[RMDB]
Chemical mapping of a 207-nucleotide RNA with 2A3. Conditions: 150 mM KOAc, 10 mM MgCl2 and 150 mM bicine (pH 8.5), 24 C. Values cover nucleotides 27 to 156. The 2A3 profile rests on 808 reads.
RNA sequence: GGGAACGACUCGAGUAGAGUCGAAAAAGUCACCUAUUACGAUAGGUGCCAUUUGAACCAGCGAACAAUUCAGUUGCGAGAUUCGAGGUUUCAGUCUGAAUCAUAGUAGCCAUUACGAUGGCUACAACUCACUCCCGACUGUUCGCAGUCGGGAGAACCAUGACACCGAGUUCGCUCGGUGUCAUGGAAAAGAAACAACAACAACAAC
Reactivity to 2A3 in 0.01 (KOAc 150mM, MgCl2 10mM, bicine 150mM(pH8.5), 24C), signal-to-noise 2, nucleotides 027 to 156: a000g040u030c000a000c000c000u000a020u000u080a060c190g050a040u020a010g000g000u000g000c030c030a200u200u090u150g030a080a040c000c010a020g150c000g000a000a000c010a070a200u010u000c000a000g010u010u000g000c000g000a000g000a000u010u010c010g000a020g020g050u070u110u280c010a030g190u110c010u000g030a010a000u070c060a070u100a070g000u000a000g000c000c000a030u000u050a100c240g160a030u030g000g020c000u010a000c000a000a000c010u100c060a080c020u000c020c000c010g010a000c000u040g030u050u040c150g040c110a000g030u030c000g000g020g000a000g010a000a000